[RMDB]
RNA sequence: GGGAACGACUCGAGUAGAGUCGAAAAGGGGCAACUCUUCUCAGAAUCCAGCGAGAGGCGUGGAGAGAGGGCCGCGGUGCUCUGGAGUAGAGGCUCUGUUCCUCGAAACACCAUCGAUCGUCCCUUCGAGACAGAUAAAGUUCGCUUUAUCUGUCUCAAAAGAAACAACAACAACAAC
Reactivity to 2A3 in 0.01 (KOAc 150mM, MgCl2 10mM, bicine 150mM(pH8.5), 24C), signal-to-noise 3, nucleotides 027 to 126: g010g000g010g010c010a040a060c020u000c010u090u040c020u010c010a070g180a090a100u040c030c010a030g080c050g070a230g010a040g290g110c090g070u070g030g020a050g000a000g010a030g020g020g000c010c020g030c020g000g010u010g000c010u010c010u020g000g000a000g000u000a010g000a010g000g000c020u060c170u300g100u220u110c010c000u010c010g010a010a010a010c000a010c120c000a020u000c000g010a150u040c010g020u010c000c020c020u010u050c050
Reactivity to DMS in 0.01 (KOAc 150mM, MgCl2 10mM, bicine 150mM(pH8.5), 24C), signal-to-noise 4, nucleotides 027 to 126: g020g010g020g010c100a080a110c030u000c010u000u010c020u010c000a150g010a180a170u000c030c010a120g010c100g000a170g010a080g000g000c080g020u000g010g010a090g020a090g020a030g010g010g010c090c030g000c040g010g000u000g000c010u000c010u000g000g010a060g000u000a070g000a040g010g010c050u020c230u020g010u020u000c000c000u010c000g000a200a120a170c010a010c140c010a020u000c010g010a090u010c040g010u000c000c000c000u000u000c090
Chemical mapping of a 177-nucleotide RNA with 2A3 and DMS.
The DMS profile rests on 3,111 reads.
In probing experiments dimethyl sulfate is read out at A N1 and C N3, which are open when not base-paired.
Conditions: 150 mM KOAc, 10 mM MgCl2 and 150 mM bicine (pH 8.5), 24 C.
For DMS the reverse transcriptase was MarathonRT.